The record gives the reactivity of an RNA of 177 nucleotides to 2A3 and DMS. For 2A3, 3,199 sequencing reads were counted. Conditions: 150 mM KOAc, 10 mM MgCl2 and 150 mM bicine (pH 8.5), 24 C.
RNA sequence: GGGAACGACUCGAGUAGAGUCGAAAACUGUGAGGCUUCGGCCUCACAGAUAGGUUUCUUUUUAGUGAUUUUUCCAAACCCCUUUCUGCAAAAAUCAUUAAACUCGCGUACGUUUCGACGUACGCAAAUGGAGUUGAUAUUUCGAUAUCAACUCCAUAAAAGAAACAACAACAACAAC
Reactivity to 2A3 in 0.01 (KOAc 150mM, MgCl2 10mM, bicine 150mM(pH8.5), 24C), signal-to-noise 3, nucleotides 027 to 126: c000u000g000u000g000a010g020g000c030u060u110c300g130g000c000c000u000c000a000c000a000g010a000u030a020g020g000u020u020u060c010u080u120u020u010u020a010g010u010g010a020u000u020u030u060u020c090c030a150a110a260c080c020c000c060u060u190u110c060u100g030c030a000a000a000a040a030u020c010a020u020u050a050a080a040c100u110c170g010c000g000u010a000c000g000u000u020u070c210g080a000c000g010u000a000c010g000c000a010a010
Reactivity to DMS in 0.01 (KOAc 150mM, MgCl2 10mM, bicine 150mM(pH8.5), 24C), signal-to-noise 3, nucleotides 027 to 126: c000u010g020u000g010a010g010g020c010u000u000c220g030g020c000c010u000c010a000c000a010g000a070u000a050g010g010u000u000u000c000u000u000u000u000u000a040g020u000g010a030u000u000u000u000u000c060c100a030a130a170c070c030c010c060u010u010u000c110u000g000c160a010a020a010a010a010u000c020a000u000u000a050a050a070c300u010c150g010c000g020u000a010c000g000u000u000u020c160g010a040c000g000u000a000c010g000c000a000a030